[RMDB]
RNA sequence: GGGAACGACUCGAGUAGAGUCGAAAAUAAAAAUCCCAGCUGCCAUACCCACCAUCGACAGGAGUAUGAACGUGGCCACUGACACAACUACUAGAGUCAUAGUGGGAUACAGCUCAUAACACAAAAACGCACGAAAUAUGUUCGCAUAUUUCGUGCGAAAAGAAACAACAACAACAAC
Reactivity to 2A3 in 0.01 (KOAc 150mM, MgCl2 10mM, bicine 150mM(pH8.5), 24C), signal-to-noise 1, nucleotides 027 to 126: u060a020a110a000a000a000u000c000c010c000a030g060c000u050g010c000c170a170u220a300c100c030c010a000c020c000a010u050c080g060a010c000a070g070g080a050g190u050a050u290g100a190a040c070g000u000g000g000c050c090a090c050u160g150a000c000a000c000a010a140c000u030a000c000u050a020g010a010g180u020c000a010u020a030g000u000g000g010g080a030u010a050c000a000g000c000u000c050a180u240a240a060c070a020c010a020a170a000a000a000